[RMDB]
Conditions: 150 mM KOAc, 10 mM MgCl2 and 150 mM bicine (pH 8.5), 24 C. This 177-nucleotide RNA was probed chemically with DMS and 2A3. For 2A3, 1,176 sequencing reads were counted. For 2A3 the reverse transcriptase was SuperScript II with manganese. The data come from the RNA Mapping Database (RMDB), library 15KREP. For DMS, 2,031 sequencing reads were counted. DMS adducts were read by reverse transcription with MarathonRT.
RNA sequence: GGGAACGACUCGAGUAGAGUCGAAAAACUCUGGUUUGAUUUUGUUGAAAAUCCCAGUGUUAUUGGUGUUUAUCAUAAACUUGGAGAACGUGUACGCCAAGCUAUCUUAAACACUGUUAAAUUUUGUUAGAUAUGUUUUGUUCGCAAAACAUAUCUAAAAAGAAACAACAACAACAAC
Reactivity to DMS in 0.01 (KOAc 150mM, MgCl2 10mM, bicine 150mM(pH8.5), 24C), signal-to-noise 2, nucleotides 027 to 126: a030c030u000c010u000g010g010u020u020u010g010a020u000u000u000u010g030u000u020g000a060a030a040a040u000c010c010c000a030g020u010g000u000u000a070u000u010g000g010u000g000u010u000u000a000u000c040a020u000a040a100a130c000u010u000g000g000a070g000a100a110c250g030u000g000u010a140c110g020c000c000a010a000g020c050u000a010u000c020u000u000a000a010a000c000a010c000u000g000u000u000a060a120a170u010u010u020u010g000u000
Reactivity to 2A3 in 0.01 (KOAc 150mM, MgCl2 10mM, bicine 150mM(pH8.5), 24C), signal-to-noise 2, nucleotides 027 to 126: a010c020u040c010u020g020g010u060u190u020g020a000u060u020u050u050g210u110u220g150a070a000a000a000u000c000c000c000a000g010u010g000u030u040a190u100u110g000g000u000g010u000u020u000a030u000c010a010u070a030a100a030c010u000u000g010g010a070g020a040a080c060g030u100g120u210a020c020g000c030c000a000a000g000c010u040a030u010c000u000u000a020a020a000c000a010c000u020g100u090u120a090a230a250u080u200u050u060g020u000